This 177-nucleotide RNA was probed chemically with 2A3 and DMS. The RNA was probed in 150 mM KOAc, 10 mM MgCl2 and 150 mM bicine (pH 8.5) at 24 C. The data come from the RNA Mapping Database (RMDB), libraries RFM100 and RFMREP.

[RMDB]
RNA sequence: GGGAACGACUCGAGUAGAGUCGAAAAUCUGAUCCCGCUUCGAUCCGUUGGAUAAUACGAUAAGACAAAUAAUUAGAGCGGUUCCAGUGACUCUGUUUUAACUGGAACUGCCUGGGCUACGGGCUCACCAUGUCUGUAAGUUCGCUUACAGACAUGGAAAAGAAACAACAACAACAAC
Reactivity to 2A3 in 0.01 (KOAc 150mM, MgCl2 10mM, bicine 150mM(pH8.5), 24C), signal-to-noise 9, nucleotides 027 to 126: u070c050u060g040a070u030c000c010c000g010c030u070u090c040g070a060u020c020c030g100u070u140g050g020a050u070a140a080u150a140c040g050a040u060a160a040g090a030c090a040a110a030u210a090a070u210u150a060g020a020g050c000g010g000u000u000c000c000a000g000u000g030a040c010u060c110u300g140u160u120u030u080a040a020c000u000g000g000a000a000c000u000g000c000c000u010g000g010g000c010u030a090c170g090g100g000c000u000c000a030
Reactivity to DMS in 0.01 (KOAc 150mM, MgCl2 10mM, bicine 150mM(pH8.5), 24C), signal-to-noise 5, nucleotides 027 to 126: u020c120u010g010a110u010c000c000c010g020c130u000u010c060g010a060u000c040c030g020u010u000g010g010a090u010a060a100u030a140c090g010a060u020a080a100g000a070c140a060a100a090u050a090a090u020u010a060g000a100g040c000g010g000u000u000c000c000a010g020u000g000a060c110u000c140u020g020u020u020u000u000a140a070c000u000g000g010a020a000c000u000g010c000c010u000g010g010g000c020u000a060c110g000g010g000c000u010c040a150
For 2A3 the reverse transcriptase was SuperScript II with manganese.